[RMDB]
RNA sequence: GGGAACGACUCGAGUAGAGUCGAAAAGGACGGUCCGGAAGGGAAUCUGUGAACGGAUCGUCCAAAAGGUGUAGUGCAUCACAGAUUCCCUUCGCACUGCACCGUGGAGAUGCGAAAGCAUUUCCACGGAGGUACAUGCCUUCGGGCAUGUACCUCCAAAAGAAACAACAACAACAAC
Reactivity to 2A3 in 0.01 (KOAc 150mM, MgCl2 10mM, bicine 150mM(pH8.5), 24C), signal-to-noise 4, nucleotides 027 to 126: g010g000a000c000g000g000u010c010c010g030g040a020a020g040g000g010a050a100u030c030u030g030u030g070a140a010c000g000g010a010u010c000g010u000c000c000a000a000a000a000g000g000u010g010u020a010g010u010g050c010a020u040c010a020c000a000g040a100u040u020c010c000c000u010u020c030g000c000a000c000u010g000c020a000c010c000g000u000g000g000a000g000a000u000g000c000g030a080a010a010g000c000a000u000u000u000c000c000a000c030
Reactivity to DMS in 0.01 (KOAc 150mM, MgCl2 10mM, bicine 150mM(pH8.5), 24C), signal-to-noise 2, nucleotides 027 to 126: g000g010a000c030g000g000u000c020c010g030g030a060a070g000g000g020a050a130u010c100u010g000u010g020a080a210c050g000g000a040u000c000g000u000c000c000a010a030a040a090g010g010u020g010u000a050g000u010g000c020a130u000c040a010c000a010g000a140u000u010c010c000c010u000u040c110g040c050a030c020u000g000c020a030c020c000g000u000g000g000a000g000a000u000g000c000g010a170a050a140g000c000a000u000u000u000c000c010a010c020